[RMDB]
RNA sequence: GGGAACGACUCGAGUAGAGUCGAAAACUCUGGCUCCAAAUUCAAAAGUGUUUAUGGCAGGCUGAGGUCAACCAUGAAGCCUAUUAGCCUUAGUGAUGGAAUGGAGAUGGUCACUGACCCGAUGUCAGACUUCAGAUUUGUAGCUCAAGACACCGGCAGGGGUGAACAAAUUCGUUUGUUCACCCCUAAAAGAAACAACAACAACAAC
Reactivity to 2A3 in 0.01 (KOAc 150mM, MgCl2 10mM, bicine 150mM(pH8.5), 24C), signal-to-noise 1, nucleotides 027 to 156: c000u000c000u010g000g010c010u060c030c000a000a070a000u050u020c030a120a120a120a140g020u070g040u170u280u110a110u040g000g020c010a010g170g000c040u050g020a120g020g010u010c010a010a010c030c000a020u030g170a170a010g050c000c000u030a040u040u110a030g090c000c000u100u130a090g040u060g070a160u130g010g070a050a010u040g070g000a130g010a000u000g040g000u020c030a010c170u030g010a000c000c000c000g040a020u020g010u030c010a010g010a100c000u050u010c010a040g000a040u020u010u000g000u000a000g000c000u010c120a030a010g000a040c020a010c160c000g000g070c000
Reactivity to DMS in 0.01 (KOAc 150mM, MgCl2 10mM, bicine 150mM(pH8.5), 24C), signal-to-noise 1, nucleotides 027 to 156: c040u000c020u000g000g030c010u000c040c010a030a110a080u000u000c070a120a060a070a100g020u000g010u010u000u000a090u010g010g000c030a060g050g060c070u000g000a170g010g000u000c010a100a090c010c000a050u000g000a100a120g000c020c000u010a090u000u000a090g030c040c020u000u000a110g020u020g040a120u010g000g000a110a120u030g010g030a190g000a160u000g000g030u000c060a060c070u000g010a060c040c010c010g000a070u010g000u010c010a150g000a090c070u000u000c090a160g000a150u010u000u000g040u000a100g030c000u000c050a090a130g000a090c030a090c010c000g000g040c230